Annotation:
Chemical mapping of a 177-nucleotide RNA with 2A3 and DMS.
RNA sequence: GGGAACGACUCGAGUAGAGUCGAAAAGAUAUGGACCCACUACCCACCGUCAAGACCAGGGCGACGAAGAGUCCAAUUCGGAAACGAAUUGGACUCAGAGCCUUGAGACGAGGUGGGUCCUAAGUCAUCUCUGUGUAUUGUUCGCAAUACACAGAGAAAAAGAAACAACAACAACAAC
Reactivity to 2A3 in 0.01 (KOAc 150mM, MgCl2 10mM, bicine 150mM(pH8.5), 24C), signal-to-noise 1, nucleotides 027 to 126: g070a100u300a240u300g050g020a000c020c100c010a020c020u210a300c020c030c000a020c020c000g000u010c090a130a160g180a240c090c150a020g000g000g000c020g060a300c060g050a060a100g000a010g030u060c020c000a020a010u040u010c000g040g000a100a160a120c020g010a010a010u020u000g010g040a020c020u010c010a000g010a010g010c020c000u000u040g030a050g000a020c000g000a010g010g000u010g000g020g000u000c010c000u040a040a000g200u130c080a130
Reactivity to DMS in 0.01 (KOAc 150mM, MgCl2 10mM, bicine 150mM(pH8.5), 24C), signal-to-noise 3, nucleotides 027 to 126: g000a140u020a280u000g010g000a030c000c010c000a040c020u010a070c010c000c030a300c110c030g030u020c000a120a240g030a170c300c030a000g000g000g010c000g000a100c300g010a110a070g020a020g000u030c000c000a040a000u000u000c010g000g000a150a090a220c010g030a010a000u000u000g000g010a000c000u040c020a000g000a130g030c000c020u000u000g000a130g030a000c010g000a100g020g000u000g000g000g020u010c000c000u010a030a130g000u010c160a170

In probing experiments dimethyl sulfate is read out at A N1 and C N3, which are open when not base-paired. Source: RMDB library TTRINS, as collected in RNAgym. For DMS, 1,657 sequencing reads were counted. The 2A3 profile rests on 2,323 reads. The RNA was probed in 150 mM KOAc, 10 mM MgCl2 and 150 mM bicine (pH 8.5) at 24 C. For 2A3 the reverse transcriptase was SuperScript II with manganese. For DMS the reverse transcriptase was MarathonRT.